[RMDB]
RNA sequence: GGGAACGACUCGAGUAGAGUCGAAAACUGUGAGGCUUCGGCCUCACAGAUAGGUUUCUUUUUAGUGAUUUAUCCAAACCCCUUUGUGCAAAAAUCAUUAAACUCGCGUACGUUUCGACGUACGCAAUAACCAUGGGUUAUUCGUAACCCAUGGUUAAAAAGAAACAACAACAACAAC
Reactivity to 2A3 in 0.01 (KOAc 150mM, MgCl2 10mM, bicine 150mM(pH8.5), 24C), signal-to-noise 3, nucleotides 027 to 126: c000u000g000u010g020a010g000g000c050u070u140c260g190g000c020c010u000c000a010c000a000g000a000u040a030g030g010u010u000u030c000u080u170u020u020u000a020g030u010g010a000u010u010u070a140u050c040c030a030a060a130c030c030c000c030u050u120u270g100u120g030c050a040a020a040a000a020u020c020a000u030u030a090a050a060c100u100c150g000c000g000u000a000c010g000u030u000u120c190g060a010c000g010u010a000c010g000c000a000a000
Reactivity to DMS in 0.01 (KOAc 150mM, MgCl2 10mM, bicine 150mM(pH8.5), 24C), signal-to-noise 2, nucleotides 027 to 126: c010u000g010u000g000a000g000g050c000u000u000c180g030g000c020c000u000c000a000c000a010g000a060u010a030g010g010u000u000u000c000u000u000u000u000u000a020g010u000g000a030u000u000u000a120u010c050c020a010a070a100c060c040c030c090u020u000u010g000u000g030c120a000a100a030a010a030u000c000a000u030u000a030a060a080c300u000c150g000c000g000u000a000c000g000u000u010u000c150g010a010c000g010u000a000c000g000c030a020a010